Background:
This 177-nucleotide RNA was probed chemically with 2A3 and DMS. DMS (dimethyl sulfate) methylates the pairing face of unpaired adenines and cytosines. DMS adducts were read by reverse transcription with MarathonRT. For 2A3, 704 sequencing reads were counted. The RNA was probed in 150 mM KOAc, 10 mM MgCl2 and 150 mM bicine (pH 8.5) at 24 C. For 2A3 the reverse transcriptase was SuperScript II with manganese. It was measured as part of the RMDB library OK1LIB.
RNA sequence: GGGAACGACUCGAGUAGAGUCGAAAAGUGGAGAUGAGGACGUGGCCGCCGCGUUAGGCGCUCGUGCGGCAGGCACACCAGCGCCACCAUGCUGUUCAUCCGAGGUCGUCGAAGACGCUACCGCUGCACCUGAGGGUCCUUUCGAGGACCCUCAGGUAAAAGAAACAACAACAACAAC
Reactivity to 2A3 in 0.01 (KOAc 150mM, MgCl2 10mM, bicine 150mM(pH8.5), 24C), signal-to-noise 2, nucleotides 027 to 126: g140u100g000g020a150g000a160u120g060a030g070g030a070c090g000u100g000g010c000c000g000c000c010g050c030g030u070u030a110g020g010c050g040c020u010c040g010u050g030c020g000g060c000a150g040g000c000a000c000a050c080c030a030g030c000g020c010c000a060c010c020a050u200g000c000u020g150u220u100c070a060u080c060c020g010a000g020g040u060c030g000u020c020g060a020a040g050a030c010g000c090u100a100c020c010g030c060u130g020c010
Reactivity to DMS in 0.01 (KOAc 150mM, MgCl2 10mM, bicine 150mM(pH8.5), 24C), signal-to-noise 1, nucleotides 027 to 126: g110u000g000g010a160g010a060u010g010a040g050g020a060c090g020u070g000g000c110c000g000c010c060g020c050g040u000u030a190g000g000c030g020c000u000c300g030u000g030c000g010g000c050a190g000g000c080a160c000a160c110c040a010g000c010g050c020c000a170c070c010a070u010g000c060u000g000u020u070c070a050u010c040c010g040a140g000g030u000c030g140u000c030g030a150a210g000a060c010g020c000u000a090c040c040g030c020u000g070c270